Source: RMDB library VIROID, as collected in RNAgym.
The record gives the reactivity of an RNA of 177 nucleotides to 2A3 and DMS.
Conditions: 150 mM KOAc, 10 mM MgCl2 and 150 mM bicine (pH 8.5), 24 C.
RNA sequence: GGGAACGACUCGAGUAGAGUCGAAAAUUUCAACCUGCGUGGGUUGAGGCGGCUUAGCGGAUUAGGGCGUUCUGCCCCAGUGGUACCAUUACCCUAUGCAAAGUCUGCAUGCAGGCAGGGUAGUGUGGAGAUAAGGGAUGUUCGCAUCCCUUAUCUCAAAAGAAACAACAACAACAAC
Reactivity to 2A3 in 0.01 (KOAc 150mM, MgCl2 10mM, bicine 150mM(pH8.5), 24C), signal-to-noise 2, nucleotides 027 to 126: u010u040u050c020a020a020c000c000u090g050c120g180u300g040g000g030u000u030g010a020g020g010c010g030g000c030u000u070a050g030c020g090g080a200u080u160a070g010g000g040c030g050u130u040c120u160g010c000c010c000c010a060g040u140g080g020u050a070c000c000a030u000u020a030c020c000c010u010a040u110g030c060a110a030a000g040u040c050u040g070c030a040u160g070c010a010g030g050c020a000g000g040g020u000a010g010u040g060u160g190
Reactivity to DMS in 0.01 (KOAc 150mM, MgCl2 10mM, bicine 150mM(pH8.5), 24C), signal-to-noise 2, nucleotides 027 to 126: u000u010u000c030a070a030c030c000u000g030c260g030u010g020g010g010u000u000g020a030g010g000c040g010g000c070u000u010a090g020c000g020g000a090u010u010a090g000g010g020c000g020u000u000c080u010g020c010c030c000c080a050g000u010g020g010u010a210c120c030a040u000u010a010c010c000c000u000a100u020g010c170a050a080a150g030u010c080u000g000c040a120u010g000c030a040g010g010c200a010g010g000g020u000a010g010u000g000u000g010